Background: The data come from the RNA Mapping Database (RMDB), library OK2TRN. The record gives the reactivity of an RNA of 177 nucleotides to 2A3 and DMS. For 2A3, 3,059 sequencing reads were counted.
RNA sequence: GGGAACGACUCGAGUAGAGUCGAAAACUUUCCGCUGGGUCGGGCGGAAAUGAGCCGUGGCUUUUGGCUGGCGGAGCCGCUGGCAGGGACCGGGCCCCACCCUGCCCCAGUGGCUGCCGACUCACGCAUUCAGAGAAUGGUUCGCCAUUCUCUGAAUAAAAGAAACAACAACAACAAC
Reactivity to 2A3 in 0.01 (KOAc 150mM, MgCl2 10mM, bicine 150mM(pH8.5), 24C), signal-to-noise 2, nucleotides 027 to 126: c000u010u020u020c010c000g000c020u030g010g010g020u010c010g030g020g030c040g000g070a020a060a100u270g050a030g000c010c020g050u090g060g020c040u120u160u260u300g110g000c020u050g090g030c030g000g060a010g020c010c000g010c010u000g000g000c010a000g000g010g000a030c080c100g150g100g030c010c010c010c000a020c000c000c010u000g010c000c000c020c010a000g010u010g000g010c000u040g030c000c000g010a010c010u000c000a010c070g060c000
Reactivity to DMS in 0.01 (KOAc 150mM, MgCl2 10mM, bicine 150mM(pH8.5), 24C), signal-to-noise 4, nucleotides 027 to 126: c090u000u000u000c000c010g000c010u000g000g020g010u000c010g010g020g030c010g000g010a010a020a050u000g000a120g010c020c020g010u000g020g010c030u010u010u010u020g010g020c010u000g000g030c020g010g000a060g030c010c000g030c010u000g000g010c000a010g010g000g000a100c220c110g010g010g000c000c010c020c070a210c010c000c000u000g000c040c120c110c080a000g020u010g000g020c010u000g020c010c000g000a030c020u000c020a150c270g010c170
Notes
For DMS, 6,076 sequencing reads were counted.